RNA sequence: GGGAACGACUCGAGUAGAGUCGAAAACCAGCAGCCAUGACCUACCAGGAUGCGGUGCGGCUCGCCGCACAGGUCAUCCCUCAUCGGGCGCGUCCUGCGUCCUUCCACGCCAACCCACAAGGGAUCUAAAACACGUUGGGCUUCGGCCCAACGUGAAGCAAUGCUAUAUGUUCGCAUAUAGCAUUGCAAAAGAAACAACAACAACAAC
Reactivity to 2A3 in 0.01 (KOAc 150mM, MgCl2 10mM, bicine 150mM(pH8.5), 24C), signal-to-noise 3, nucleotides 027 to 156: c010c010a010g050c070a000g010c030c040a090u140g040a070c010c020u060a130c040c060a040g040g020a020u020g010c010g000g010u000g000c040g030g010c060u080c090g110c020c000g010c010a020c010a010g000g080u100c030a070u080c010c020c020u130c040a180u190c110g010g010g000c020g010c020g060u100c010c100u120g020c010g020u030c000c000u070u030c030c000a080c070g020c020c030a090a120c020c020c010a060c070a150a120g050g000g020a030u000c030u120a050a060a010a020c010a000c000g000u000u000g010g010g000c010u040u100c200g090g000c000c000c000a010a000c000g000u000g000a010a000
The record gives the reactivity of an RNA of 207 nucleotides to 2A3. High 2A3 reactivity points to a flexible backbone, as in loops and unpaired stretches. For 2A3, 2,080 sequencing reads were counted.